An RNA of 207 nucleotides, treated with 2A3 and DMS and read out base by base. For DMS the reverse transcriptase was MarathonRT. Values cover nucleotides 27 to 156. Source: RMDB library M2RFPK, as collected in RNAgym.

RNA sequence: GGGAACGACUCGAGUAGAGUCGAAAAAACCCGUUGAUUGAAAUUGAACCGUCCUGUUAUCGAAAGAUAGGCAGAAGAUACGAAAUGUGUGACAGCAUGGGAAGUAAAGGCACACCGUGGUUCCCUUAAAAUCGUCGAAUCUUCGGAUUCGACGAAACGAAUACCUUCAGUUCGCUGAAGGUAUUCGAAAAGAAACAACAACAACAAC
Reactivity to 2A3 in 0.01 (KOAc 150mM, MgCl2 10mM, bicine 150mM(pH8.5), 24C), signal-to-noise 2, nucleotides 027 to 156: a000a000c030c000c000g060u040u050g070a300u030u060g060a070a130a140u070u100g020a050a020c010c000g060u030c010c010u030g010u080u050a020u050c020g020a070a070a030g000a020u090a030g030g060c010a000g040a130a030g030a050u120a080c080g010a010a090a030u140g030u020g000u010g050a050c040a030g060c040a090u110g030g000g040a080a000g010u080a060a050a060g030g000c000a010c000a010c030c010g010u070g010g040u030u050c020c000c000u030u030a080a120a030a140u020c000g010u000c000g000a000a000u010c000u010u060c170g070g000a000u000u000c000g000a010c000g000a000a000a000
Reactivity to DMS in 0.01 (KOAc 150mM, MgCl2 10mM, bicine 150mM(pH8.5), 24C), signal-to-noise 1, nucleotides 027 to 156: a100a120c030c000c000g030u000u010g010a140u000u000g000a010a180a060u040u000g000a100a060c050c010g010u010c020c010u010g020u010u010a020u010c080g000a200a150a090g030a010u000a060g010g040c020a040g010a080a090g040a080u000a120c110g000a030a100a100u000g020u000g030u000g020a070c010a200g020c050a080u000g000g010g030a150a120g000u010a050a140a080g010g010c020a030c020a020c060c100g000u010g020g080u000u000c010c000c000u000u000a060a090a090a150u000c030g010u010c020g030a060a000u020c020u000u010c300g030g000a030u000u000c000g000a000c030g000a010a020a100